[RMDB]
RNA sequence: GGGAACGACUCGAGUAGAGUCGAAAAUCAGCAGAAUAUCAGGUAGGCCGUUUCGGCUUUGUCAUCAAUGAGAAACGCCAUCGGGUCUACGGCGAACCAUCAGACUUUAUCGGCUGGCAGCGGAGGCCAUCGUACUCGGCUUCGGCCGAGUACGAUGAAAAGAAACAACAACAACAAC
Reactivity to 2A3 in 0.01 (KOAc 150mM, MgCl2 10mM, bicine 150mM(pH8.5), 24C), signal-to-noise 2, nucleotides 027 to 126: u050c040a040g100c000a030g000a190a000u100a020u250c050a040g230g000u030a030g010g000c000c010g150u000u080u160c100g030g010c020u080u000u070g170u060c020a010u030c000a090a290u120g000a050g000a050a010a000c000g000c000c030a000u050c040g070g000g140u020c010u000a000c000g050g000c030g020a010a020c050c000a010u010c090a020g080a150c020u080u020u110a200u070c030g000g000c000u050g000g020c010a010g010c000g000g030a030g060g000c000
Reactivity to DMS in 0.01 (KOAc 150mM, MgCl2 10mM, bicine 150mM(pH8.5), 24C), signal-to-noise 1, nucleotides 027 to 126: u030c010a080g000c020a000g070a030a000u030a090u020c200a060g000g000u000a080g000g000c000c000g050u010u000u010c120g060g020c000u000u010u010g000u010c060a050u010c220a140a060u000g020a130g060a010a000a050c080g020c030c050a000u050c130g070g000g000u070c000u050a040c020g000g040c030g030a130a150c060c050a080u060c060a010g010a000c130u000u030u030a120u000c050g000g000c020u030g000g040c000a020g070c060g000g000a060g000g000c030